[RMDB]
RNA sequence: GGGAACGACUCGAGUAGAGUCGAAAACACGUUGGCUUGCGCCGUGUAGUGUUGCCUGUCAAGUUCAUAGCUGAAUUUUCUCACUCUGGCGAGUUGCUGCGCCCGCGAUUGGACAAGACUAUGCGCUACCUACACACAGGUUCCUACUACGGGAACCGAUGUCUAUCUCUUUCGAGAGAUAGACAUCAAAAGAAACAACAACAACAAC
Reactivity to 2A3 in 0.01 (KOAc 150mM, MgCl2 10mM, bicine 150mM(pH8.5), 24C), signal-to-noise 9, nucleotides 027 to 156: c070a010c050g030u030u060g060g020c080u050u100g040c070g040c080c100g000u000g000u010a040g010u020g010u140u020g000c000c000u020g000u010c010a030a110g010u000u010c010a010u020a030g000c030u060g100a230a170u170u110u200u070c150u050c030a090c040u150c070u070g010g000c020g020a030g040u150u190g120c100u120g010c010g000c000c010c010g010c000g040a070u150u050g000g000a000c000a030a030g010a000c020u050a110u100g100c160g000c010u020a010c000c000u010a000c010a000c010a010c030a030g000g010u000u000c010c000u050a170c060u110a040c100g010g000g000a000a000c000c000
Reactivity to DMS in 0.01 (KOAc 150mM, MgCl2 10mM, bicine 150mM(pH8.5), 24C), signal-to-noise 4, nucleotides 027 to 156: c020a110c110g020u020u010g030g000c090u000u000g010c050g020c060c070g050u000g010u000a060g020u000g020u000u000g000c000c040u000g030u010c030a040a300g010u000u000c030a070u010a150g020c090u030g020a070a110u000u000u010u000c070u000c050a090c070u000c080u010g010g030c020g010a100g020u000u000g010c100u010g000c050g020c000c020c030g020c030g000a260u000u000g010g020a070c050a030a300g000a060c030u000a290u010g000c040g020c040u000a050c050c030u000a080c060a070c030a130c100a080g050g020u000u000c000c000u010a100c110u010a110c130g010g000g010a030a000c020c010
Chemical mapping of a 207-nucleotide RNA with 2A3 and DMS. For DMS the reverse transcriptase was MarathonRT. As a SHAPE reagent, 2A3 marks flexible, mostly unpaired nucleotides at the ribose 2'-OH. Conditions: 150 mM KOAc, 10 mM MgCl2 and 150 mM bicine (pH 8.5), 24 C. The DMS profile rests on 9,602 reads.